Source: RMDB library OK2TST, as collected in RNAgym.
Chemical mapping of a 177-nucleotide RNA with DMS and 2A3.
For DMS the reverse transcriptase was MarathonRT.
The 2A3 profile rests on 1,877 reads.
The RNA was probed in 150 mM KOAc, 10 mM MgCl2 and 150 mM bicine (pH 8.5) at 24 C.
For DMS, 3,368 sequencing reads were counted.
RNA sequence: GGGAACGACUCGAGUAGAGUCGAAAAGCCAUUCGUGGUGAGCGGUAUGCUAAAGAUCUACAUUAUGGUUUAGCUGACUCAAGGCCAGAGGGCAAAUUGAUGGAUGAUAAAAUUAACUUAGGCGAGCCUUUAGAAAGUCGUUCGCGACUUUCUAAAGAAAAGAAACAACAACAACAAC
Reactivity to DMS in 0.01 (KOAc 150mM, MgCl2 10mM, bicine 150mM(pH8.5), 24C), signal-to-noise 4, nucleotides 027 to 126: g020c010c010a070u010u000c120g040u010g010g010u000g000a130g030c050g010g010u010a050u000g020c050u010a070a090a070g010a110u010c040u000a130c090a090u000u010a060u000g010g010u000u000u010a090g000c040u010g020a100c040u000c040a070a110g000g010c020c030a070g010a110g020g010g020c040a050a050a060u000u000g000a070u010g000g000a060u000g000a100u010a060a050a060a080u010u000a050a070c050u000u000a110g010g000c040g020a080g000c120
Reactivity to 2A3 in 0.01 (KOAc 150mM, MgCl2 10mM, bicine 150mM(pH8.5), 24C), signal-to-noise 2, nucleotides 027 to 126: g000c010c000a020u030u090c140g050u040g070g020u050g040a020g020c050g020g190u200a090u160g000c030u060a140a080a070g080a060u010c020u070a040c020a130u140u110a060u150g010g000u040u000u040a030g000c000u000g050a090c010u020c090a060a070g080g000c000c010a030g010a040g060g000g000c020a030a050a080u080u120g010a020u090g030g040a030u070g020a010u100a090a120a030a050u130u060a050a050c010u020u060a010g060g010c030g010a040g010c010